[RMDB]
RNA sequence: GGGAACGACUCGAGUAGAGUCGAAAAAGAGCCAGGCACAACAACAGGCUGACCCUUGGACUGGGGGAAGUGGCCUCCACUAUUGGCAUGGUUGGUGAGAUGCAUUAGAGAUUUUGACACAGGAGGCUGGGGCCAGAAAGGAAGAGCUGCUCUCAGGUAAUAUGACUUGUUUCGACAAGUCAUAUUAAAAAGAAACAACAACAACAAC
Reactivity to DMS in 0.01 (KOAc 150mM, MgCl2 10mM, bicine 150mM(pH8.5), 24C), signal-to-noise 3, nucleotides 027 to 156: a090g020a080g020c030c010a080g020g070c070a170c060a100a100c040a120a100c050a080g030g010c010u000g010a140c020c020c000u000u000g020g020a110c090u010g010g010g010g000g010a100a110g020u000g030g030c030c020u000c020c040a100c100u000a090u000u000g010g000c060a080u000g000g040u010u000g020g040u000g010a080g020a040u000g010c050a140u000u000a100g020a180g000a170u000u000u010u010g010a110c060a050c050a110g020g000a060g010g010c020u010g000g020g040g000c070c050a080g000a060a070a140g010g000a100a090g010a120g030c020u000g000c030u010c000u000c030a080g020g000
Reactivity to 2A3 in 0.01 (KOAc 150mM, MgCl2 10mM, bicine 150mM(pH8.5), 24C), signal-to-noise 3, nucleotides 027 to 156: a010g090a000g010c030c010a020g050g040c070a030c030a170a130c020a050a000c010a050g010g030c010u030g060a090c020c000c000u010u090g130g040a090c070u050g000g000g000g000g000a060a020g060u100g040g010c020c010u040c020c000a060c040u110a070u140u100g060g020c030a030u020g040g030u080u060g000g020u080g030a070g010a040u040g000c030a040u050u120a030g010a020g040a110u090u080u060u220g040a050c050a010c040a130g020g020a000g000g000c010u010g000g000g000g000c020c000a000g070a040a050a010g030g010a030a010g010a000g050c030u020g010c020u010c000u000c020a000g030g020
Conditions: 150 mM KOAc, 10 mM MgCl2 and 150 mM bicine (pH 8.5), 24 C. An RNA of 207 nucleotides, treated with DMS and 2A3 and read out base by base. For 2A3 the reverse transcriptase was SuperScript II with manganese.